[RMDB]
RNA sequence: GGGAACGACUCGAGUAGAGUCGAAAAGAUAUGGAGCCUGAACUACUUCAAUCCCUGGUACGCGAAGAACUUUAUCGGAAACGAUAAAGGGAGCGUAUCAUCAGGGAUUGAAGCAGGCUCCUAAGUCGCAUUGAAAGUAGUUCGCUACUUUCAAUGCAAAAGAAACAACAACAACAAC
Reactivity to 2A3 in 0.01 (KOAc 150mM, MgCl2 10mM, bicine 150mM(pH8.5), 24C), signal-to-noise 1, nucleotides 027 to 126: g060a000u150a050u250g010g010a000g020c010c000u040g010a070a090c090u300a040c010u300u020c010a010a010u020c000c000c000u000g000g020u010a010c020g040c020g180a300a080g010a050a050c010u010u010u010a010u020c010g030g030a080a040a060c020g000a000u000a020a010a000g020g000g010a010g000c010g000u010a020u060c030a050u090c010a000g000g000g000a000u000u020g010a000a010g020c000a020g000g050c000u000c000c000u000a000a000g000u010c110
Reactivity to DMS in 0.01 (KOAc 150mM, MgCl2 10mM, bicine 150mM(pH8.5), 24C), signal-to-noise 2, nucleotides 027 to 126: g010a090u000a300u010g000g000a010g030c000c010u000g010a050a060c100u020a300c010u000u000c000a010a020u000c000c000c000u000g000g010u010a020c000g020c010g040a110a160g000a120a240c020u020u010u010a000u000c000g010g010a130a130a180c020g000a000u010a000a010a010g000g000g000a100g000c000g020u000a030u000c240a140u010c150a040g010g000g020a000u010u000g010a020a000g020c000a000g000g020c010u000c000c000u000a010a080g000u000c060